Source information:
This 207-nucleotide RNA was probed chemically with DMS and 2A3. Values cover nucleotides 27 to 156. The reactions ran in a buffer of 150 mM KOAc, 10 mM MgCl2 and 150 mM bicine (pH 8.5), at 24 C. For 2A3, 2,580 sequencing reads were counted.

[RMDB]
RNA sequence: GGGAACGACUCGAGUAGAGUCGAAAACGCCCGGUGGUGUGGGACGAAGUAAGUGGGUUUAGUACGCCCUGCCAAAACGGCUCCGAAACAAACAAAAAGGUGCGUGCCGCACUCACGAGGGACUGCCAGUGAUAUACUGGAGGAAGGUGGGGAUGACGUUUAAACUUAUGUUCGCAUAAGUUUAAACAAAAGAAACAACAACAACAAC
Reactivity to DMS in 0.01 (KOAc 150mM, MgCl2 10mM, bicine 150mM(pH8.5), 24C), signal-to-noise 2, nucleotides 027 to 156: c080g030c020c010c020g030g030u000g020g010u000g000u020g000g010g030a120c040g020a110a120g030u000a080a110g030u000g010g020g010u000u000u010a060g030u000a070c080g020c060c000c000u000g000c000c010a080a100a130a240c160g000g000c040u010c030c030g000a100a150a180c130a080a100a230c060a020a070a080a100a130g000g010u020g070c010g030u000g020c000c020g000c190a030c000u000c020a030c010g080a110g000g020g000a120c070u000g020c010c000a020g010u000g030a170u000a090u010a030c010u000g000g010a080g000g000a080a070g010g010u000g000g000g000g010a120u020g000a100c150
Reactivity to 2A3 in 0.01 (KOAc 150mM, MgCl2 10mM, bicine 150mM(pH8.5), 24C), signal-to-noise 4, nucleotides 027 to 156: c080g060c000c010c020g040g030u070g020g010u040g040u130g010g020g010a050c060g040a090a030g080u160a080a050g000u060g010g040g000u000u050u110a010g000u010a000c010g010c010c000c010u000g000c000c000a080a200a030a070c090g020g000c010u030c090c030g080a090a100a060c100a070a120a020c020a040a060a050a030a040g040g000u130g050c000g010u010g020c000c010g000c000a010c010u040c010a010c010g000a070g020g000g030a020c020u050g020c010c000a020g010u020g080a040u040a070u090a300c010u020g000g020a010g020g040a090a040g030g020u120g010g000g010g000a030u090g040a030c070